[RMDB]
RNA sequence: GGGAACGACUCGAGUAGAGUCGAAAAAGUUUUGGUAGAUCCAAUGUUGAUCGCUAACCAACAAGCAAGUAUCAACUACGCUUUCGCUUAGAACAUACUAAAGCUACACGAAUUGAAUCGCCAUAGUUUGGUUCGUGUCACAGUUUAUGGCUCGGGGGAAUAGACUUCCCUUCGGGGAAGUCUAUUCAAAAGAAACAACAACAACAAC
Reactivity to 2A3 in 0.01 (KOAc 150mM, MgCl2 10mM, bicine 150mM(pH8.5), 24C), signal-to-noise 1, nucleotides 027 to 156: a000g040u010u040u070u080g010g030u090a090g010a070u000c130c140a280a240u300g050u100u220g060a010u010c010g010c030u020a070a060c040c020a020a060c050a040a030g050c030a050a020g010u010a020u100c030a010a070c000u030a010c010g050c070u100u220u250c050g010c030u050u050a030g020a110a030c020a110u040a010c010u040a120a130a000g020c000u010a010c000a000c010g010a010a000u070u060g000a030a010u030c080g000c010c000a020u000a000g010u000u030u000g000g000u010u010c000g000u000g040u040c020a020c010a180g100u190u170u000a000u000g000g000c010u020c020g000g000g000g000
Structure probing data (2A3) for a 207-nucleotide construct.
The reactions ran in a buffer of 150 mM KOAc, 10 mM MgCl2 and 150 mM bicine (pH 8.5), at 24 C.
Source: RMDB library RSTRND, as collected in RNAgym.